[RMDB]
RNA sequence: GGGAACGACUCGAGUAGAGUCGAAAACGAAGGACUUUCGAGUCCUUCGACUUACCGAGAAAGAUCCUCGGUAAAAAUCUGGAACCCUUGGAAACAAGGGAAUGAACGGAAUCUUCGGAUUCCGUAAACAUAAGUGUAAAUUCGUUUACACUUAUGUAAAAGAAACAACAACAACAAC
Reactivity to DMS in 0.01 (KOAc 150mM, MgCl2 10mM, bicine 150mM(pH8.5), 24C), signal-to-noise 7, nucleotides 027 to 126: c020g000a010a010g000g000a020c000u000u000u020c170g010a030g010u000c000c010u000u000c000g000a060c150u000u000a000c000c000g000a010g000a160a180a120g000a150u000c050c000u000c000g010g000u000a000a020a060a090a050u000c090u010g010g010a130a120c000c000c000u000u010g000g000a170a100a150c010a000a000g000g010g010a020a020u010g010a150a030c000g000g000a010a000u000c000u000u020c180g020g000a010u000u000c000c000g000u000a010a070
Reactivity to 2A3 in 0.01 (KOAc 150mM, MgCl2 10mM, bicine 150mM(pH8.5), 24C), signal-to-noise 6, nucleotides 027 to 126: c010g000a010a010g010g010a000c020u050u080u160c260g050a050g000u000c000c000u000u000c000g000a000c000u010u010a000c000c010g010a000g010a030a260a010g080a050u050c000c000u000c000g000g000u000a010a010a000a000a000u040c070u130g150g060a110a120c000c000c000u000u000g020g010a060a030a010c000a010a000g000g000g040a000a030u070g010a020a000c000g000g000a000a000u000c010u040u060c230g050g000a000u000u010c000c000g000u010a010a050